[RMDB]
RNA sequence: GGGAACGACUCGAGUAGAGUCGAAAAAACCUCGUUCUUUAUUGGGGAGUACACUCGAGGAGUGGAAGGCGGGGAGGGCGGGGAGGAGUGUUACCCCACGGGAACUGCUGAGUGCCCCUGACGUCCAGAACCUCUUUGUUCGCAAAGAGGAAAAGAAACAACAACAACAAC
Reactivity to 2A3 in 0.01 (KOAc 150mM, MgCl2 10mM, bicine 150mM(pH8.5), 24C), signal-to-noise 9, nucleotides 027 to 129: a000a000c030c010u050c010g040u090u020c040u050u180u120a220u120u120g000g000g000g000a060g040u070a010c000a010c000u020c020g090a070g060g030a050g020u060g060g080a140a020g010g030c080g020g010g010g030a180g020g020g040c090g000g010g010g000a040g000g020a050g010u060g060u010u100a120c000c000c010c010a030c010g000g000g010a040a020c050u080g000c020u020g050a040g030u040g020c000c000c000c010u020g020a020c010g030u050c030c000a060g020a120a070
Reactivity to DMS in 0.01 (KOAc 150mM, MgCl2 10mM, bicine 150mM(pH8.5), 24C), signal-to-noise 5, nucleotides 027 to 129: a050a100c060c020u050c030g010u030u020c030u010u080u070a170u080u020g010g000g040g060a160g030u030a090c000a070c030u000c070g040a150g010g020a050g030u050g000g050a080a060g010g000c130g010g020g050g040a160g040g070g000c100g030g000g040g040a040g010g020a130g030u050g020u000u000a140c000c000c000c000a090c140g010g060g020a020a020c000u000g000c150u030g000a070g040u000g020c040c030c030c080u040g040a060c100g030u000c000c010a070g020a130a090
Chemical mapping of a 170-nucleotide RNA with 2A3 and DMS.